[RMDB]
RNA sequence: GGGAACGACUCGAGUAGAGUCGAAAAGAAGGCACUUUCGAGUGCCUUCAUGGGGAGCACAGGUCUCCCUCCCUUGCAAACUCCCUAAGGGAGGAGACCUAAUUAGGUGCACUUUCGAGUGCACCAAUGGGUUGGCUAAAUUCGUUUAGCCAACCCAAAAAGAAACAACAACAACAAC
Reactivity to DMS in 0.01 (KOAc 150mM, MgCl2 10mM, bicine 150mM(pH8.5), 24C), signal-to-noise 1, nucleotides 027 to 126: g020a040a000g020g010c000a000c000u000u000u010c180g000a010g000u000g000c000c010u000u020c000a040u000g010g000g030g000a130g000c190a130c190a040g000g010u000c000u000c070c030c010u000c000c000c000u000u000g020c160a070a080a100c250u000c070c040c010u040a010a040g020g000g010a030g020g000a010g020a010c000c000u070a060a030u040u010a110g010g000u000g000c000a000c000u000u000u030c190g000a010g040u000g000c010a000c000c000a010a030